Notes
This 177-nucleotide RNA was probed chemically with DMS and 2A3. Source: RMDB libraries RFM100 and RFMREP, as collected in RNAgym. As a SHAPE reagent, 2A3 marks flexible, mostly unpaired nucleotides at the ribose 2'-OH. The reactions ran in a buffer of 150 mM KOAc, 10 mM MgCl2 and 150 mM bicine (pH 8.5), at 24 C. 2A3 adducts were read by reverse transcription with SuperScript II with manganese. DMS (dimethyl sulfate) methylates the pairing face of unpaired adenines and cytosines.
RNA sequence: GGGAACGACUCGAGUAGAGUCGAAAAUGACUGCUCAGAAUCAUUUAUUAUCAUAAAUCCGACUACAUCAUUAACAUUGAAAAACAAAAGAUAAUUACUGUGUGAACAAUAAUUUUUUAAGAUUUGAAUGAGACAUGAAAUUCGUUUCAUGUCUCAUAAAAGAAACAACAACAACAAC
Reactivity to DMS in 0.01 (KOAc 150mM, MgCl2 10mM, bicine 150mM(pH8.5), 24C), signal-to-noise 3, nucleotides 027 to 126: u010g000a050c060u000g010c060u000c090a080g020a140a100u010c040a030u000u000u000a040u030u020a070u010c050a100u010a060a060a050u000c050c050g000a120c080u010a070c080a050u000c010a040u010u000a050a110c070a040u020u010g000a040a070a090a070a090c090a070a070a060a070g000a040u000a010a020u000u000a010c040u000g000u010g010u020g000a110a040c020a010a020u010a010a000u000u000u010u000u000u050a050a200g010a160u010u000u010g000a140
Reactivity to 2A3 in 0.01 (KOAc 150mM, MgCl2 10mM, bicine 150mM(pH8.5), 24C), signal-to-noise 5, nucleotides 027 to 126: u080g040a020c020u040g010c030u060c060a040g070a120a080u020c030a070u040u030u140a110u030u070a060u100c050a040u120a100a080a040u020c030c040g050a060c030u100a060c040a060u080c020a050u100u090a120a040c040a050u070u120g090a100a120a020a020a010c060a010a070a020a010g070a020u060a070a040u090u040a050c050u000g000u010g010u030g160a030a010c020a000a030u090a040a040u010u030u000u010u090u170a140a100g050a150u060u040u110g010a030